[RMDB]
RNA sequence: GGGAACGACUCGAGUAGAGUCGAAAAACGAGGGGUUGGUGGUCGAAUUUCCGAUGCCCGGCGCCGGAUCGAUCUUGAGGAAGGUAAUCGUGCGGCUCUCCAGAGCACCGACAAUGCUGAUGGGGACUAGCCUACGAAACUUCGGUUUCGUAGGCUAAAAAGAAACAACAACAACAAC
Reactivity to DMS in 0.01 (KOAc 150mM, MgCl2 10mM, bicine 150mM(pH8.5), 24C), signal-to-noise 1, nucleotides 027 to 126: a100c080g010a120g000g000g020g000u060u000g060g020u030g000g030u000c050g030a130a160u010u010u000c000c030g000a030u040g000c010c000c040g000g000c290g070c090c060g000g000a060u060c080g000a000u020c020u000u000g000a140g020g020a120a120g000g010u020a080a030u060c040g000u030g000c120g010g000c000u000c030u030c130c100a040g000a000g010c000a030c030c000g000a020c210a130a190u000g000c000u000g000a130u000g010g020g000g010a100c230
Reactivity to 2A3 in 0.01 (KOAc 150mM, MgCl2 10mM, bicine 150mM(pH8.5), 24C), signal-to-noise 1, nucleotides 027 to 126: a010c110g010a040g070g000g000g000u030u080g060g130u060g020g080u040c020g020a110a030u040u130u150c040c050g020a040u090g070c000c050c000g100g000c000g000c000c000g010g000a000u010c050g000a000u000c030u210u140g060a040g060g050a140a120g020g020u000a190a080u040c020g030u080g070c050g030g000c060u040c000u000c050c020a080g010a040g000c010a000c080c090g050a000c010a030a030u020g000c010u120g050a070u030g000g000g040g000a000c020